RNA sequence: GGGAACGACUCGAGUAGAGUCGAAAAGGCCGCGUUGAGCGCCAGCAGGUUGGUCUGUUCGGCAAUGGAGCGGAUCACCCCGAGCACACUGACGAUGGAUUGCACGUCCUGCUGCAGGCUAUCCAGACCUCGUAGGUAAUUUCGAUUACCUACGAGGAAAAGAAACAACAACAACAAC
Reactivity to DMS in 0.01 (KOAc 150mM, MgCl2 10mM, bicine 150mM(pH8.5), 24C), signal-to-noise 5, nucleotides 027 to 126: g010g010c030c030g030c050g020u020u010g000a150g020c190g020c060c040a050g020c040a040g000g000u000u010g020g010u010c010u010g000u000u000c090g030g010c110a080a110u010g000g010a120g020c010g000g000a080u010c070a100c060c020c000c040g010a120g000c040a100c110a070c060u000g000a040c060g000a150u000g000g000a050u000u000g010c070a080c140g000u010c020c050u010g010c090u000g010c070a120g000g000c030u000a070u000c010c030a110g000a300
Reactivity to 2A3 in 0.01 (KOAc 150mM, MgCl2 10mM, bicine 150mM(pH8.5), 24C), signal-to-noise 4, nucleotides 027 to 126: g050g010c050c000g000c040g040u040u110g100a080g060c020g010c010c010a000g000c030a000g000g100u180u200g050g050u080c020u020g040u020u070c050g030g040c050a050a120u220g060g030a060g020c030g020g000a030u050c020a060c000c010c010c030g030a050g030c030a040c000a010c080u090g060a040c030g070a090u060g010g010a040u010u120g010c040a030c080g040u060c000c040u070g040c020u040g000c020a040g040g000c000u040a030u020c010c000a020g050a090